[RMDB]
Conditions: 150 mM KOAc, 10 mM MgCl2 and 150 mM bicine (pH 8.5), 24 C. This 177-nucleotide RNA was probed chemically with DMS and 2A3. It was measured as part of the RMDB library OK1LIB. Values cover nucleotides 27 to 126. For 2A3 the reverse transcriptase was SuperScript II with manganese.
RNA sequence: GGGAACGACUCGAGUAGAGUCGAAAACGGAAUGCCCUUGCUGUUGCCAAAAGAGAGAUGGUCCUGGCUCACCCAUUGUUGGGCUAUCUACAACGCGGAGGACAGGCCAUGGCUAGCGAUAACAAGGAUGAUUAACGACUUUCGAGUCGUUAAUCAUAAAAGAAACAACAACAACAAC
Reactivity to DMS in 0.01 (KOAc 150mM, MgCl2 10mM, bicine 150mM(pH8.5), 24C), signal-to-noise 4, nucleotides 027 to 126: c070g010g010a080a060u010g010c100c010c000u000u000g010c070u000g020u000u000g000c030c210a100a080a140a140g020a110g000a090g010a020u010g010g000u060c000c010u000g000g000c070u010c070a070c040c020c070a170u000u000g010u000u020g000g010g020c190u000a040u040c050u000a080c060a020a040c060g000c160g020g020a210g000g000a020c030a050g000g000c020c010a010u000g000g030c030u030a050g010c020g010a040u040a050a060c040a060a060g000g000
Reactivity to 2A3 in 0.01 (KOAc 150mM, MgCl2 10mM, bicine 150mM(pH8.5), 24C), signal-to-noise 7, nucleotides 027 to 126: c050g060g070a170a040u160g060c010c000c000u000u020g030c020u040g010u240u050g020c040c030a060a090a150a020g170a020g010a010g020a030u040g010g020u200c000c010u020g030g010c050u020c050a170c010c020c010a070u040u110g010u040u050g020g040g000c060u060a110u090c020u050a070c010a070a010c040g040c060g040g020a050g000g040a020c020a030g010g020c000c000a010u040g050g000c010u050a020g010c010g040a050u030a070a030c030a050a010g090g020
Notes: For DMS, 8,340 sequencing reads were counted.